[RMDB]
RNA sequence: GGGAACGACUCGAGUAGAGUCGAAAAUCCUAAGUCCUGUCGAAUCCAGAGGUGAUAGGGAGCGUCUCGGAAACGAGACGCGACGAUCUAUCACUCCCCACCUGGUGGCGACAGGAUAUGGAAAACCCGGUCAUUCUGUUCGCAGAAUGACCGGGAACUAACACGAAUACUUCGGUAUUCGUGUUAGAAAAGAAACAACAACAACAAC
Reactivity to 2A3 in 0.01 (KOAc 150mM, MgCl2 10mM, bicine 150mM(pH8.5), 24C), signal-to-noise 1, nucleotides 027 to 156: u000c000c000u010a100a030g020u000c000c000u000g000u000c000g030a070a060u030c000c000a000g000a020g000g010u010g010a000u000a000g000g010g000a000g000c010g010u000c000u000c010g040g040a100a140a070c020g000a000g000a000c000g000c000g000a010c000g000a000u010c000u000a000u000c010a010c030u110c040c010c010c000a050c000c000u000g040g020u030g060g140c040g000a000c000a000g000g000a000u010a020u030g000g010a010a060a050a140c010c000c000g000g010u000c010a000u000u000c000u010g080u050u120c300g030c120a000g000a020a010u000g000a010c000c000g010g010g000a000a000
Reactivity to DMS in 0.01 (KOAc 150mM, MgCl2 10mM, bicine 150mM(pH8.5), 24C), signal-to-noise 1, nucleotides 027 to 156: u000c000c010u010a100a300g000u000c000c000u000g020u000c000g010a100a130u000c000c010a070g000a280g030g000u000g040a020u000a030g000g010g020a130g000c000g000u000c040u000c010g020g010a160a100a300c020g000a010g000a010c000g030c020g000a010c280g000a060u000c000u000a020u000c000a010c010u000c180c060c070c000a300c120c010u000g000g010u000g000g000c030g020a020c010a030g010g010a010u000a010u000g010g000a120a060a110a120c000c000c070g000g020u000c010a040u010u000c010u000g030u000u000c280g000c000a020g000a050a010u000g000a000c010c020g000g000g000a010a000
Structure probing data (2A3 and DMS) for a 207-nucleotide construct. For DMS the reverse transcriptase was MarathonRT. For DMS, 2,443 sequencing reads were counted. 2A3 adducts were read by reverse transcription with SuperScript II with manganese. The reactions ran in a buffer of 150 mM KOAc, 10 mM MgCl2 and 150 mM bicine (pH 8.5), at 24 C. In probing experiments dimethyl sulfate is read out at A N1 and C N3, which are open when not base-paired.